An RNA of 207 nucleotides, treated with 2A3 and DMS and read out base by base.
The 2A3 profile rests on 1,666 reads.
It was measured as part of the RMDB library OK3TST.
For 2A3 the reverse transcriptase was SuperScript II with manganese.

[RMDB]
RNA sequence: GGGAACGACUCGAGUAGAGUCGAAAAUGAAGAGGUCACUGAAAGCCGGGUGAAACGCUACCUGAAGGCGCUGCCUGCGACCCUGGGCAAGUUCAGCCCUGCACGGAUCGGCCAGCACCUACACAGGCUAACGCGCCAGAAGUUCCAGCGCCGCAGCGCUAGUACAGUCGUUCGCGACUGUACUAGCAAAAGAAACAACAACAACAAC
Reactivity to 2A3 in 0.01 (KOAc 150mM, MgCl2 10mM, bicine 150mM(pH8.5), 24C), signal-to-noise 3, nucleotides 027 to 156: u100g010a040a020g030a010g020g020u030c030a020c120u060g050a080a060a080g050c040c020g000g000g010u080g040a100a080a030c040g000c050u050a060c010c020u050g050a050a040g000g000c010g030c010u020g010c000c020u030g020c020g030a070c000c000c000u010g000g000g020c060a090a050g060u140u210c060a020g000c000c010c020u030g020c060a070c060g060g010a100u080c020g010g020c020c000a050g050c060a040c020c000u060a020c070a000c020a090g030g000c030u060a150a070c060g020c010g000c010c000a020g040a070a010g020u100u020c040c030a010g000c000g030c010c060g020c060a020g070c020
Reactivity to DMS in 0.01 (KOAc 150mM, MgCl2 10mM, bicine 150mM(pH8.5), 24C), signal-to-noise 1, nucleotides 027 to 156: u000g020a120a090g010a050g020g010u010c030a060c060u000g010a090a130a100g010c020c000g080g020g050u000g000a060a020a000c020g000c030u000a090c030c000u010g040a140a150g030g010c000g040c010u000g000c050c040u020g010c010g010a040c000c020c020u020g020g050g060c020a060a140g020u000u010c130a170g000c060c030c000u000g000c000a110c130g010g000a110u010c050g030g050c120c010a080g000c030a080c020c040u000a080c220a160c030a030g010g020c020u000a060a070c100g000c080g010c020c030a080g000a060a070g010u010u000c030c020a180g000c020g000c020c020g000c040a060g020c140
DMS adducts were read by reverse transcription with MarathonRT.